This 177-nucleotide RNA was probed chemically with DMS.
For DMS the reverse transcriptase was MarathonRT.

RNA sequence: GGGAACGACUCGAGUAGAGUCGAAAAGAUAUGGACCGUCUUAGCUAGGCUACCGUCGGAAACGACGGUUAGCCUUGGACCUAAGGACGGUCCUAAGUCAAAAGGUUCGGCGUUCGCGCCGAACCAACCUUCACGAAAUCUUCGGAUUUCGUGAAGGAAAAGAAACAACAACAACAAC
Reactivity to DMS in 0.01 (KOAc 150mM, MgCl2 10mM, bicine 150mM(pH8.5), 24C), signal-to-noise 1, nucleotides 027 to 126: g000a030u000a300u000g000g010a000c010c000g020u000c000u000u000a030g000c120u000a040g010g030c010u000a030c070c000g020u000c000g010g010a170a070a260c000g020a000c000g010g000u020u000a000g010c000c010u000u000g000g000a190c300c010u000a000a010g030g000a030c010g030g000u000c000c030u000a000a080g010u000c030a120a050a190a120g010g000u010u010c020g000g000c000g020u010u010c290g000c000g000c000c000g030a000a000c000c000a060a010